[RMDB]
RNA sequence: GGGAACGACUCGAGUAGAGUCGAAAAGGACUGCGCAGUCCGGCAACAUCAGCAGAGAGCCCGCUAUACGUGACGGAUUGGCUGAAGCAUACAGAAAUAUUGAGCCUCCUGCAAGAGGCAGCCAAGCAAAACGUACGUGAGUUCGCUCACGUACGAACAAAUAAAAUGACUUCGGUCAUUUUAUUUGAAAAGAAACAACAACAACAAC
Reactivity to DMS in 0.01 (KOAc 150mM, MgCl2 10mM, bicine 150mM(pH8.5), 24C), signal-to-noise 3, nucleotides 027 to 156: g020g030a070c020u000g000c070g040c070a110g020u020c020c010g010g000c020a040a100c030a090u000c020a110g000c010a080g020a140g020a140g000c040c000c010g020c040u010a100u010a060c060g000u000g000a120c050g020g000a130u000u000g010g010c000u000g010a050a120g030c030a090u010a240c060a060g010a090a060a140u010a190u000u010g000a200g000c020c010u000c020c020u000g030c150a110a110g000a070g010g030c010a040g000c020c030a040a080g020c060a050a030a080a170c030g010u000a010c010g030u000g010a020g010u000u010c300g020c000u000c000a010c020g040u010a000c000g000a020a110
Reactivity to 2A3 in 0.01 (KOAc 150mM, MgCl2 10mM, bicine 150mM(pH8.5), 24C), signal-to-noise 5, nucleotides 027 to 156: g030g010a010c020u080g030c160g020c120a040g020u010c000c000g010g030c020a030a040c020a110u150c040a030g010c040a010g070a000g010a030g100c010c040c020g020c040u090a100u030a180c120g050u040g050a020c030g010g040a050u040u060g030g010c010u020g030a060a020g030c030a030u140a100c040a050g150a090a170a020u260a080u160u130g030a020g010c010c010u000c030c060u120g100c040a050a040g000a010g030g000c000a000g000c010c010a020a010g020c040a000a060a030a070c000g000u000a000c000g000u000g000a010g010u030u110c170g030c120u000c000a000c000g000u000a000c000g000a000a000